An RNA of 170 nucleotides, treated with DMS and 2A3 and read out base by base. DMS adducts were read by reverse transcription with MarathonRT. The 2A3 profile rests on 2,343 reads. The RNA was probed in 150 mM KOAc, 10 mM MgCl2 and 150 mM bicine (pH 8.5) at 24 C. For 2A3 the reverse transcriptase was SuperScript II with manganese. For DMS, 2,895 sequencing reads were counted.
[RMDB]
RNA sequence: GGGAACGACUCGAGUAGAGUCGAAAAAAGCCGCCCCCGGGCGCUCCCCUCGAUACGCCUUCGAGGGGGUUCACACCUCCAGUCGGCGGGCCGGCUACUCUUCUUUCCCUUCUCUCGUCUUCCUCGGUACGUGGCCGCUUCGGCGGCCACAAAAGAAACAACAACAACAAC
Reactivity to DMS in 0.01 (KOAc 150mM, MgCl2 10mM, bicine 150mM(pH8.5), 24C), signal-to-noise 1, nucleotides 027 to 129: a090a030g000c080c020g000c020c000c110c000c130g060g070g020c020g040c140u050c000c000c000c030u060c040g070a070u070a000c300g040c000c000u190u000c000g000a050g000g000g050g050g000u000u000c180a140c150a180c000c010u060c000c130a140g040u040c090g080g010c050g000g000g030c110c080g000g000c080u000a010c060u000c030u040u010c060u090u000u000c040c000c060u000u080c030u030c020u020c000g010u020c030u040u000c030c030u010c030g000g000u060a050c040
Reactivity to 2A3 in 0.01 (KOAc 150mM, MgCl2 10mM, bicine 150mM(pH8.5), 24C), signal-to-noise 1, nucleotides 027 to 129: a000a000g020c000c000g000c000c070c000c000c000g000g020g040c060g010c040u040c000c000c000c000u000c010g010a000u030a090c170g050c060c030u060u020c000g000a050g030g000g000g000g010u040u060c020a010c010a030c050c020u080c000c000a030g090u080c020g030g010c050g010g000g040c170c020g000g000c000u010a010c050u040c000u070u040c000u030u040u040c000c030c010u080u000c010u030c020u000c000g000u020c010u150u070c010c020u010c020g010g000u060a040c080